RNA sequence: GGGAACGACUCGAGUAGAGUCGAAAAUUCGGCGACCUCAUCGAAUCGGCCGCGGACAACCUGGCCGGCAAGGGCAGGCAGCUCAACGAAACGCUGAACAGUUUGUCGCAGGCGUUGACCGCGCUGAGCAUGGAAAACACUUCGGUGUUUUCCAUGCAAAAGAAACAACAACAACAAC
Reactivity to DMS in 0.01 (KOAc 150mM, MgCl2 10mM, bicine 150mM(pH8.5), 24C), signal-to-noise 2, nucleotides 027 to 126: u000u000c060g010g000c060g000a160c060c020u000c040a070u000c130g020a030a040u030c030g000g000c070c010g040c030g000g000a170c010a090a150c060c140u000g050g020c070c010g030g000c020a150a110g010g020g000c020a110g000g000c000a070g010c020u030c090a100a100c230g000a040a080a080c210g000c090u000g000a050a020c070a050g000u000u020u000g050u000c010g000c070a120g000g000c150g000u000u000g030a140c000c010g000c000g000c010u030g000a070
Reactivity to 2A3 in 0.01 (KOAc 150mM, MgCl2 10mM, bicine 150mM(pH8.5), 24C), signal-to-noise 4, nucleotides 027 to 126: u140u050c010g050g020c000g060a060c010c010u050c020a080u050c030g080a080a040u040c020g060g040c080c020g010c010g010g010a010c020a010a030c000c000u040g110g010c110c030g000g010c050a020a050g040g030g050c010a010g040g080c020a030g020c010u020c060a030a060c090g140a150a080a030c110g000c020u030g020a080a020c010a070g100u060u070u050g030u050c020g010c020a030g010g030c080g080u050u050g030a060c000c000g000c000g000c010u010g020a010
This 177-nucleotide RNA was probed chemically with DMS and 2A3. For 2A3, 3,024 sequencing reads were counted. The reactions ran in a buffer of 150 mM KOAc, 10 mM MgCl2 and 150 mM bicine (pH 8.5), at 24 C. Reactivities are given for positions 27 through 126. For DMS the reverse transcriptase was MarathonRT.